Structure probing data (2A3) for a 207-nucleotide construct. Source: RMDB library RNAMAK, as collected in RNAgym. 2A3 adducts were read by reverse transcription with SuperScript II with manganese. Conditions: 150 mM KOAc, 10 mM MgCl2 and 150 mM bicine (pH 8.5), 24 C. For 2A3, 1,478 sequencing reads were counted.

[RMDB]
RNA sequence: GGGAACGACUCGAGUAGAGUCGAAAAAAAAAAAAAGAUAUGGAGAUCAUUGACGUUACUUGUCAGCGUGGAUUUCCAACGGUACCUCGGAAACGAGGUACGGUUGGCCGGUCACGCUUGGAUUUAGGAGGAAGGGAUCUCCUAAGUCAAAAAAAAAGAAUGAUAUUCGGUUCGCCGAAUAUCAUUCAAAAGAAACAACAACAACAAC
Reactivity to 2A3 in 0.01 (KOAc 150mM, MgCl2 10mM, bicine 150mM(pH8.5), 24C), signal-to-noise 2, nucleotides 027 to 156: a000a000a000a000a000a000a060a020a000g070a050u150a060u150g030g010a050g010a020u040c040a140u100u110g060a010c050g070u080u100a040c040u060u060g020u010c020a000g000c020g010u010g060g050a060u070u060u040c010c020a000a000c010g100g000u000a000c010c000u000c000g010g010a060a080a070c020g020a000g000g010u000a000c020g010g000u010u000g000g000c050c060g090g010u060c010a010c000g000c000u030u110g020g000a050u230u170u170a040g010g030a020g080g040a000a100g080g030g020a020u010c000u000c000c000u000a080a000g010u010c000a030a020a020a020a010a030a090a000a050